[RMDB]
RNA sequence: GGGAACGACUCGAGUAGAGUCGAAAAGGGGACGACAACUCUGGGGAGAAAAGGGAGGAUCGGAUGGGAAGAGUAUAUCCUACGGGAAUCCCCCGGUCCCUCUCACGUCCAGCCCCUCCCCGUGUCUAGUACUAUGAAUGUUCGCAUUCAUAGUACUAAAAGAAACAACAACAACAAC
Reactivity to 2A3 in 0.01 (KOAc 150mM, MgCl2 10mM, bicine 150mM(pH8.5), 24C), signal-to-noise 4, nucleotides 027 to 126: g000g010g000g010a020c030g040a020c050a090a040c040u020c060u090g090g020g070g020a110g050a040a120a030a040g030g020g000a070g010g000a010u000c000g020g010a090u170g050g000g010a060a040g070a050g180u060a050u020a030u160c010c010u010a040c150g050g030g020a010a050u030c000c000c010c000c000g000g000u020c050c000c000u000c010u000c000a020c020g050u030c010c010a020g010c010c000c000c000u020c000c010c000c000g040u060g050u010c030u030
Reactivity to DMS in 0.01 (KOAc 150mM, MgCl2 10mM, bicine 150mM(pH8.5), 24C), signal-to-noise 2, nucleotides 027 to 126: g000g010g000g020a140c140g000a050c070a070a140c090u000c020u040g030g000g010g020a110g010a060a080a120a070g020g000g000a050g020g000a040u000c030g030g000a100u010g020g000g000a040a070g020a150g020u000a100u010a130u000c080c060u000a060c070g040g020g000a110a120u000c000c010c000c030c010g000g010u000c030c030c020u000c000u000c010a180c130g010u010c010c020a090g000c010c000c000c000u000c030c000c000c090g000u010g030u000c090u000